Chemical mapping of a 177-nucleotide RNA with DMS and 2A3. The DMS profile rests on 32,975 reads. For DMS the reverse transcriptase was MarathonRT. It was measured as part of the RMDB library OK1LIB. For 2A3, 22,569 sequencing reads were counted.
RNA sequence: GGGAACGACUCGAGUAGAGUCGAAAACUUCAACCCUUUGUUAGCUUGGUCAGCUGGGGUUGAGCCGCCCGCUCGCAAGGGCUGGUUCGAAUAAAAGGGCCGUGGCUUAGUUAUAUGAUUCGAAACCGUCUAAUGACGUCUUCGGAUGUCGUUAGACAAAAGAAACAACAACAACAAC
Reactivity to DMS in 0.01 (KOAc 150mM, MgCl2 10mM, bicine 150mM(pH8.5), 24C), signal-to-noise 8, nucleotides 027 to 126: c090u020u010c030a020a040c010c000c000u000u040u040g010u020u020a040g020c010u020u020g010g010u010c120a110g010c010u000g000g000g000g000u010u010g000a020g000c070c060g000c030c010c030g000c050u020c090g000c180a110a080g000g000g010c030u020g030g000u000u010c040g010a080a060u020a060a060a110a120g000g010g000c020c040g030u020g000g000c040u010u010a080g010u010u010a080u030a110u020g000a090u000u010c020g000a060a070a110c240c110
Reactivity to 2A3 in 0.01 (KOAc 150mM, MgCl2 10mM, bicine 150mM(pH8.5), 24C), signal-to-noise 9, nucleotides 027 to 126: c030u080u040c010a010a020c000c000c000u070u090u150g240u100u140a030g000c020u050u080g070g090u190c050a020g000c010u030g010g000g010g000u000u040g000a000g010c000c010g010c000c000c010g000c030u090c040g090c070a060a100g030g010g000c020u050g050g000u020u040c030g020a060a030u120a150a160a040a020g040g010g000c010c010g040u070g010g000c020u040u030a020g050u150u020a130u030a060u210g210a150u090u090c070g040a090a050a080c050c060